[RMDB]
RNA sequence: GGGAACGACUCGAGUAGAGUCGAAAAGAUAUGGAUCUGACCCGAGGGGGCAUUUCGUUGAAAUCGGAAACGAUGGAGAAAUGCUCUUUCGCAGAUCCUAAGUCAAAGCAGAACUUCGGUUCUGCAAUCGAUAUACAUGGUUCGCCAUGUAUAUCGAAAAAGAAACAACAACAACAAC
Reactivity to 2A3 in 0.01 (KOAc 150mM, MgCl2 10mM, bicine 150mM(pH8.5), 24C), signal-to-noise 2, nucleotides 027 to 126: g010a020u090a030u180g010g000a010u000c010u020g080a130c060c110c070g000a020g000g010g010g000g000c000a010u000u000u000c050g150u210u040g020a010a020a000u000c000g010g020a040a030a030c000g000a000u020g000g010a030g000a010a010a000u010g000c010u010c030u000u000u000c000g000c010a000g000a000u000c000c000u010a130a010g040u020c050a000a130a060g020c000a010g000a020a000c020u080u170c300g170g000u010u010c000u000g000c000a000a040
Reactivity to DMS in 0.01 (KOAc 150mM, MgCl2 10mM, bicine 150mM(pH8.5), 24C), signal-to-noise 5, nucleotides 027 to 126: g000a040u000a300u010g000g000a010u000c000u000g000a170c230c180c060g010a020g000g000g010g000g000c000a010u000u000u000c000g010u000u000g000a120a150a010u020c000g000g000a140a090a190c000g000a010u000g000g000a070g000a010a000a020u000g010c010u000c000u000u000u000c000g000c010a010g000a010u000c000c000u000a020a070g010u000c040a080a120a160g000c000a000g000a010a010c000u010u010c210g020g000u000u000c000u000g010c000a020a020

An RNA of 177 nucleotides, treated with 2A3 and DMS and read out base by base. The RNA was probed in 150 mM KOAc, 10 mM MgCl2 and 150 mM bicine (pH 8.5) at 24 C. 2A3 adducts were read by reverse transcription with SuperScript II with manganese. For 2A3, 7,129 sequencing reads were counted.